RNA sequence: GGGAACGACUCGAGUAGAGUCGAAAAUGACGUUAAACUGCUGAGUCAUACAUACUGACACCGGUUGCUCAACAGGCUGUGUGGGACAAUAGAAUAACAAGGCUGUCAAUUUGAGCUUGACGGCUGCAAAACCUGCAGUACUUCGGUACUGCAGGAAUCAAGGCACCAAGUUCGCUUGGUGCCUUGAAAAAGAAACAACAACAACAAC
Reactivity to 2A3 in 0.01 (KOAc 150mM, MgCl2 10mM, bicine 150mM(pH8.5), 24C), signal-to-noise 1, nucleotides 027 to 156: u110g040a000c020g010u010u100a050a040a030c020u050g030c010u010g020a000g080u000c010a000u050a090c000a000u110a020c030u050g060a020c050a020c080c030g050g000u030u020g010c020u050c010a050a040c020a040g070g000c000u010g020u010g020u080g090g030g000a000c020a000a170u160a120g080a110a050u090a160a020c140a030a000g010g000c000u000g010u010c010a010a000u090u060u150g050a040g100c010u000u050g020a000c000g020g000c010u020g000c010a130a130a000a020c000c000u010g000c000a000g020u000a020c000u050u150c250g100g000u000a000c000u000g000c000a000g000g000a000a000